RNA sequence: GGGAACGACUCGAGUAGAGUCGAAAAAUAUGUCAGUGGUUCCUGUAAGAGGAUCUAGGACAUAGGGAGGGUGGGUGAGAGCGCGGAUGUCAGAGAUCACGCGCGCGAGAAGAUAUGGGAACCACAACACUUAUUUAUUGUUCGCGGUGGGUGGGUGAAAAGAAACAACAACAACAAC
Reactivity to DMS in 0.01 (KOAc 150mM, MgCl2 10mM, bicine 150mM(pH8.5), 24C), signal-to-noise 9, nucleotides 027 to 126: a050u000a020u000g010u000c100a230g020u010g010g010u000u000c000c000u000g000u020a060a100g020a110g000g000a200u000c020u000a100g000g010a060c140a080u010a070g010g000g000a120g000g000g000u050g010g000g000u000g000a030g000a050g010c010g010c000g000g000a020u000g010u020c240a130g010a160g000a020u000c010a090c030g010c010g000c010g010c100g010a070g000a060a060g000a100u010a020u010g000g000g000a040a050c020c020a010c030a060a060
Reactivity to 2A3 in 0.01 (KOAc 150mM, MgCl2 10mM, bicine 150mM(pH8.5), 24C), signal-to-noise 4, nucleotides 027 to 126: a000u060a020u030g050u040c060a030g020u000g020g000u010u010c000c000u010g020u030a040a000g030a010g020g030a030u000c030u040a020g010g050a020c020a060u070a030g000g020g010a170g040g030g110u190g000g000g000u030g020a090g000a000g000c010g000c010g000g000a010u000g010u040c000a020g060a010g010a060u000c010a020c040g020c000g000c000g010c030g000a040g000a020a030g020a020u040a030u040g000g000g010a000a000c010c000a000c000a000a000